[RMDB]
RNA sequence: GGGAACGACUCGAGUAGAGUCGAAAAGUUUGAGGGGUUAGGGUUUUCGUAUUCCAUGGUUCAUCACGAUCGCUAAGAGCAGGUAAAAUCCAAGCAGAAAUAUUCUUAGCCACUUGCUCAUCAUUGAUCCAUAGCGUUCAUUCGUGAACGCUAUGGAAAAAGAAACAACAACAACAAC
Reactivity to DMS in 0.01 (KOAc 150mM, MgCl2 10mM, bicine 150mM(pH8.5), 24C), signal-to-noise 2, nucleotides 027 to 126: g000u000u000u000g010a110g020g000g000g010u000u000a050g000g000g000u000u000u000u010c040g020u000a130u010u010c040c010a050u000g010g010u000u000c040a070u020c110a070c080g000a060u000c070g010c070u010a080a050g030a060g000c050a010g000g010u000a060a060a120a120u000c020c030a060a180g040c090a060g000a060a080a150u000a060u000u000c060u000u020a080g020c090c070a020c090u000u000g000c010u000c040a040u000c120a080u030u000g000a210

This 177-nucleotide RNA was probed chemically with DMS. The RNA was probed in 150 mM KOAc, 10 mM MgCl2 and 150 mM bicine (pH 8.5) at 24 C. DMS adducts were read by reverse transcription with MarathonRT. Source: RMDB library OK2TST, as collected in RNAgym. In probing experiments dimethyl sulfate is read out at A N1 and C N3, which are open when not base-paired. For DMS, 1,094 sequencing reads were counted.